RNA sequence: GGGAACGACUCGAGUAGAGUCGAAAAUAAACGGAUAUCGUAAUCCGGUGCUGUGUGUGGUACCUGGUUUGGAUACCAGAGAGGUUAGGAGACAGCUUCUAAAGAUUUAUCUUGGCGAGGGGAAACCGCUCUAUAAAGACUUCGGUCUUUAUAGAGCAAAAGAAACAACAACAACAAC
Reactivity to 2A3 in 0.01 (KOAc 150mM, MgCl2 10mM, bicine 150mM(pH8.5), 24C), signal-to-noise 1, nucleotides 027 to 126: u080a010a020a020c030g020g050a070u010a020u130c080g000u050a030a000u010c000c000g000g000u040g040c010u040g020u110g040u020g000u090g200g060u010a010c030c000u010g040g090u010u020u150g110g010a030u040a070c000c000a010g020a010g010a010g060g000u100u090a030g070g000a040g000a040c040a040g040c050u060u000c020u150a090a100a020g070a010u140u230u200a100u040c040u020u090g020g000c040g050a060g000g000g020g050a000a010a000c090c090
Reactivity to DMS in 0.01 (KOAc 150mM, MgCl2 10mM, bicine 150mM(pH8.5), 24C), signal-to-noise 1, nucleotides 027 to 126: u020a040a080a110c080g030g000a080u000a060u000c080g010u000a080a030u000c020c020g020g020u000g030c020u000g000u020g010u010g030u000g000g010u000a040c060c010u000g000g030u010u000u000g000g020a050u000a020c020c000a100g020a110g020a070g000g020u000u000a020g020g010a100g000a090c130a110g000c060u010u000c040u000a050a080a060g000a060u010u000u000a030u020c050u000u000g010g000c070g000a060g020g010g010g010a030a070a090c170c070